Annotation:
Chemical mapping of a 207-nucleotide RNA with DMS and 2A3. For DMS, 1,692 sequencing reads were counted.
RNA sequence: GGGAACGACUCGAGUAGAGUCGAAAACUCGCUCAAACAUACAGAGUUGUUGUGCGAUAUGAAUCUCUCUGCAUUAGAAUGGUCGAAGAAUCAGCGGCGAUUCGAGACCCAAUUAGAAGCCGCAUUAACAGCUUUGGAACACGCCUUGCUGACGUGACCAUACUAUGGAGUUCGCUCCAUAGUAUGGAAAAGAAACAACAACAACAAC
Reactivity to DMS in 0.01 (KOAc 150mM, MgCl2 10mM, bicine 150mM(pH8.5), 24C), signal-to-noise 1, nucleotides 027 to 156: c030u000c070g010c000u000c060a060a060a180c050a180u000a250c050a080g000a110g050u000u020g010u050u000g030u000g000c010g030a160u010a040u000g000a000a160u000c060u010c090u000c040u000g060c070a100u000u000a190g000a140a120u000g020g070u010c010g000a250a260g000a060a090u000c020a180g030c040g050g010c100g000a080u000u010c020g010a300g000a090c020c010c030a030a130u030u010a160g010a110a070g000c020c010g040c010a160u000u000a000a000c040a080g030c010u010u000u000g010g030a170a120c030a070c010g020c000c030u000u010g030c150u000g010a070c030g040u000g000a300
Reactivity to 2A3 in 0.01 (KOAc 150mM, MgCl2 10mM, bicine 150mM(pH8.5), 24C), signal-to-noise 2, nucleotides 027 to 156: c010u000c010g020c040u070c060a110a130a030c020a050u300a060c030a080g080a030g030u070u020g000u000u040g000u020g000c000g010a030u000a050u170g160a230a200u010c050u000c000u000c050u140g020c060a140u110u110a040g050a300a160u130g020g030u010c030g020a100a030g000a030a030u030c020a010g030c000g140g000c050g000a020u010u000c000g020a000g000a000c000c000c000a060a140u110u110a080g060a180a010g040c000c000g000c000a000u040u140a080a060c020a020g030c010u200u080u220g000g010a050a020c010a010c050g000c000c020u080u120g000c020u020g040a020c020g000u000g030a010

The reactions ran in a buffer of 150 mM KOAc, 10 mM MgCl2 and 150 mM bicine (pH 8.5), at 24 C. Reactivities are given for positions 27 through 156.